[RMDB]
RNA sequence: GGGAACGACUCGAGUAGAGUCGAAAAGAAACGGAAACGGAAAGAGACACGAAUAACUGCGAAACUAUGUAUCUAUAUCAACAUAGUGAGUGUCUCGCUGAUAUAGAUAAAGCAGGAAAGAAAGAAAGGGAAGUCAAUCUUUCGAGAUUGACUUCCCAAAAGAAACAACAACAACAAC
Reactivity to DMS in 0.01 (KOAc 150mM, MgCl2 10mM, bicine 150mM(pH8.5), 24C), signal-to-noise 1, nucleotides 027 to 126: g000a180a110a090c080g000g000a070a060a050c030g000g030a020a080a120g010a000g000a010c000a080c010g000a190a080u000a060a140c000u000g030c000g080a030a040a080c300u000a030u000g000u000a000u000c020u000a000u000a020u000c000a160a180c210a070u030a000g000u000g000a030g020u060g000u000c080u000c000g000c030u000g010a000u000a030u000a010g000a000u020a010a040a090g000c090a020g000g030a050a080a140g000a150a110a030g040a080a080a040
Reactivity to 2A3 in 0.01 (KOAc 150mM, MgCl2 10mM, bicine 150mM(pH8.5), 24C), signal-to-noise 1, nucleotides 027 to 126: g000a010a130a000c000g000g070a190a000a050c110g000g020a000a040a000g020a000g000a000c000a000c010g130a210a270u100a140a000c000u000g000c030g110a220a000a000c110u040a050u120g000u000a000u110c000u000a000u000a060u020c080a040a220c020a060u210a000g000u000g020a000g000u050g140u040c020u000c040g000c000u000g000a040u000a000u000a020g020a000u000a050a000a020g020c020a000g040g030a040a080a000g190a000a020a000g090a100a180a070

This 177-nucleotide RNA was probed chemically with DMS and 2A3. For DMS, 1,186 sequencing reads were counted. DMS (dimethyl sulfate) methylates the pairing face of unpaired adenines and cytosines. For 2A3, 698 sequencing reads were counted. The reactions ran in a buffer of 150 mM KOAc, 10 mM MgCl2 and 150 mM bicine (pH 8.5), at 24 C. DMS adducts were read by reverse transcription with MarathonRT. Reactivities are rounded to 0.1 and cut off at 0 and 3.